This 177-nucleotide RNA was probed chemically with DMS. Values cover nucleotides 27 to 126. The reactions ran in a buffer of 150 mM KOAc, 10 mM MgCl2 and 150 mM bicine (pH 8.5), at 24 C.
RNA sequence: GGGAACGACUCGAGUAGAGUCGAAAAGUACUAUGCCCGCCAUUAUUGAUGCAUGCUCCACCUCCCACUCCUUUAUAGUUGCUUUGAAGUUUCCUUUCGGUGGGUUCUGCAGCGUCUUUAUCAGAAAGUAUGUGACCAAUUUCGAUUGGUCACAUACAAAAGAAACAACAACAACAAC
Reactivity to DMS in 0.01 (KOAc 150mM, MgCl2 10mM, bicine 150mM(pH8.5), 24C), signal-to-noise 2, nucleotides 027 to 126: g020u000a070c070u000a080u000g010c020c020c020g010c110c110a100u000u000a050u000u010g020a090u010g030c040a090u010g020c030u000c030c010a070c020c030u010c030c000c020a120c110u020c050c050u010u000u010a030u020a090g010u000u010g030c040u000u010u000g000a070a150g000u000u000u000c030c000u000u000u000c090g030g000u000g010g000g020u010u000c090u010g000c050a040g010c020g010u000c030u000u000u000a060u020c050a060g000a110a130a100